This 177-nucleotide RNA was probed chemically with DMS and 2A3.

[RMDB]
RNA sequence: GGGAACGACUCGAGUAGAGUCGAAAAUCGAAGAUAUUCUGGUGCUUUGAGCACACAGGCGGAGUUAAUGUGAGGAUAAGCAGUAAGCUGGCGAUGGUCACUUCAUUCUGCAUCCAUCGACCACACCGCAGUAUCAUGCGUUCGCGCAUGAUACUGCAAAAGAAACAACAACAACAAC
Reactivity to DMS in 0.01 (KOAc 150mM, MgCl2 10mM, bicine 150mM(pH8.5), 24C), signal-to-noise 2, nucleotides 027 to 126: u000c070g000a110a080g010a090u020a060u000u000c020u010g020g000u000g020c010u000u010u010g000a050g020c090a050c040a070c130a090g000g030c050g020g000a050g010u000u010a040a040u000g000u000g000a050g010g000a120u000a040a140g000c040a050g020u000a060a070g030c220u010g010g030c050g000a050u000g010g000u000c060a050c110u020u000c130a090u000u010c090u000g010c120a080u000c010c040a060u000c040g000a150c040c060a060c210a150c100c120
Reactivity to 2A3 in 0.01 (KOAc 150mM, MgCl2 10mM, bicine 150mM(pH8.5), 24C), signal-to-noise 2, nucleotides 027 to 126: u050c010g020a030a030g030a030u090a120u190u130c060u090g000g010u030g000c010u100u140u300g080a020g030c030a020c030a000c000a030g070g000c020g040g020a040g000u080u100a030a060u110g020u020g030a020g020g010a020u010a120a020g000c020a030g040u030a050a040g070c060u030g060g030c020g030a050u130g060g010u040c030a000c000u100u160c050a110u170u040c020u040g030c000a000u000c020c010a070u040c000g130a200c050c010a020c000a010c000c050
The RNA was probed in 150 mM KOAc, 10 mM MgCl2 and 150 mM bicine (pH 8.5) at 24 C.